[RMDB]
RNA sequence: GGGAACGACUCGAGUAGAGUCGAAAACAUCAUCCCUUCGGGGAUGAUGAAAGAUCGUAAGAUCAGGCUUACCGUAAUAAGCCAAAAUACGAGCGAAACGCAAAAGACCUGUGUUCGCACAGGUCAACGUGGUAACAACGUUCGCGUUGUUACCACGAAAAGAAACAACAACAACAAC
Reactivity to DMS in 0.01 (KOAc 150mM, MgCl2 10mM, bicine 150mM(pH8.5), 24C), signal-to-noise 1, nucleotides 027 to 126: c010a020u000c000a000u000c000c000c000u000u010c140g070g000g040g010a000u030g000a000u020g000a060a110a050g010a020u000c000g000u010a050a110g000a070u000c140a130g000g010c010u010u000a030c010c040g000u010a090a230u000a000a000g060c000c020a030a030a060a140u000a050c040g000a090g000c030g000a070a140a140c080g000c140a080a030a120a070g030a040c000c000u000g000u000g000u000u000c190g020c000a000c000a000g010g000u000c000a030a010
Reactivity to 2A3 in 0.01 (KOAc 150mM, MgCl2 10mM, bicine 150mM(pH8.5), 24C), signal-to-noise 1, nucleotides 027 to 126: c000a000u010c000a000u000c000c010c000u040u040c240g100g010g010g020a000u020g000a000u000g000a010a040a020g080a060u020c010g000u040a070a000g020a140u040c100a000g010g000c000u010u020a070c090c110g180u050a030a150u040a050a030g010c000c000a020a020a030a000u090a010c020g000a050g050c040g070a170a120a070c120g020c070a010a090a040a060g020a010c000c000u000g020u000g010u000u060c160g000c090a000c010a000g010g000u000c000a000a000

Chemical mapping of a 177-nucleotide RNA with DMS and 2A3. Source: RMDB library M2PK50, as collected in RNAgym. Values cover nucleotides 27 to 126. The DMS profile rests on 950 reads. For DMS the reverse transcriptase was MarathonRT.